[RMDB]
This 177-nucleotide RNA was probed chemically with 2A3 and DMS.
The RNA was probed in 150 mM KOAc, 10 mM MgCl2 and 150 mM bicine (pH 8.5) at 24 C.
For DMS the reverse transcriptase was MarathonRT.
The 2A3 profile rests on 2,755 reads.
2A3 adducts were read by reverse transcription with SuperScript II with manganese.
The DMS profile rests on 2,646 reads.

RNA sequence: GGGAACGACUCGAGUAGAGUCGAAAAUGGGCUAGGCCAUUCCAGUUCCAGACGCAGGCUGAACGUCGUGAAGCGGAAGGGGCGGGCCCGCAGGCGUCCGUGUGGUCCUCCGUGCAGCCCUCCGGCCGAUCGUCAACCAUUUCGAUGGUUGACGAUCAAAAGAAACAACAACAACAAC
Reactivity to 2A3 in 0.01 (KOAc 150mM, MgCl2 10mM, bicine 150mM(pH8.5), 24C), signal-to-noise 2, nucleotides 027 to 126: u130g010g010g000c050u070a040g040g120c010c000a040u020u060c000c010a030g090u060u000c010c010a020g010a020c010g010c060a040g080g030c030u030g050a060a000c020g010u020c010g020u040g090a090a010g010c010g000g030a060a020g050g010g020g000c030g000g030g020c000c010c020g020c030a060g040g000c010g020u000c020c010g060u050g050u080g070g070u040c000c000u000c010c000g010u060g020c000a020g000c020c010c000u020c050c010g000g010c000c010
Reactivity to DMS in 0.01 (KOAc 150mM, MgCl2 10mM, bicine 150mM(pH8.5), 24C), signal-to-noise 2, nucleotides 027 to 126: u010g000g030g000c030u000a080g010g000c030c090a150u020u010c000c020a160g020u000u020c020c030a130g000a030c080g000c000a040g000g000c020u010g000a120a160c050g000u000c000g000u000g000a140a110g020c030g010g010a060a060g000g020g050g040c040g010g010g020c000c010c040g000c150a070g030g020c260g000u020c000c060g030u010g030u010g000g010u000c050c060u030c010c060g030u000g000c080a100g010c040c000c020u000c040c040g010g000c050c110